Chemical mapping of a 207-nucleotide RNA with DMS and 2A3. Values cover nucleotides 27 to 156. The DMS profile rests on 2,558 reads.
RNA sequence: GGGAACGACUCGAGUAGAGUCGAAAAGAUUCGGCUAUAGCGAUGCAGAGUUUGAGGUGAUGUGGCUGCUUUACGUAGCAGGAAAGGAGAGCCGGAAUGUCAAUGACUGAAGUAGUAGAGGAAUCGCUGAAGGCAGAUGCCAGGUUCCGGCAUUUGACCUUUAUCAGCCUUUCGAGGCUGAUAAAGGAAAAGAAACAACAACAACAAC
Reactivity to DMS in 0.01 (KOAc 150mM, MgCl2 10mM, bicine 150mM(pH8.5), 24C), signal-to-noise 1, nucleotides 027 to 156: g000a170u010u000c050g010g010c020u010a080u000a170g000c040g020a040u000g000c040a080g000a100g020u000u000u010g030a090g000g000u000g020a090u010g030u000g000g010c020u010g000c010u010u010u000a050c110g070u000a060g020c040a070g000g000a010a070a130g040g000a130g000a100g030c030c000g000g020a040a090u000g010u010c070a090a080u000g010a170c070u010g000a030a100g010u000a110g000u000a070g000a160g000g010a060a060u000c070g010c070u000g000a060a100g010g010c020a030g000a090u000g000c010c000a090g050g020u010u020c070c050g020g020c000a060u010u020u010g000a180
Reactivity to 2A3 in 0.01 (KOAc 150mM, MgCl2 10mM, bicine 150mM(pH8.5), 24C), signal-to-noise 2, nucleotides 027 to 156: g110a050u100u100c040g000g000c030u050a020u090a180g010c030g040a040u030g010c030a010g070a040g090u010u120u140g040a030g000g030u040g000a020u050g040u040g060g000c000u020g000c000u070u020u040a100c080g000u020a000g000c000a020g040g030a090a060a010g020g030a050g000a010g040c020c030g010g040a060a020u070g040u060c040a020a050u050g050a130c010u040g010a050a030g030u170a000g020u030a030g030a020g050g060a020a030u080c060g000c070u030g000a020a010g020g000c020a000g020a100u110g020c010c000a020g050g000u050u040c020c000g000g000c000a000u050u010u070g030a040
Annotation
The RNA was probed in 150 mM KOAc, 10 mM MgCl2 and 150 mM bicine (pH 8.5) at 24 C. The 2A3 profile rests on 1,590 reads. For DMS the reverse transcriptase was MarathonRT.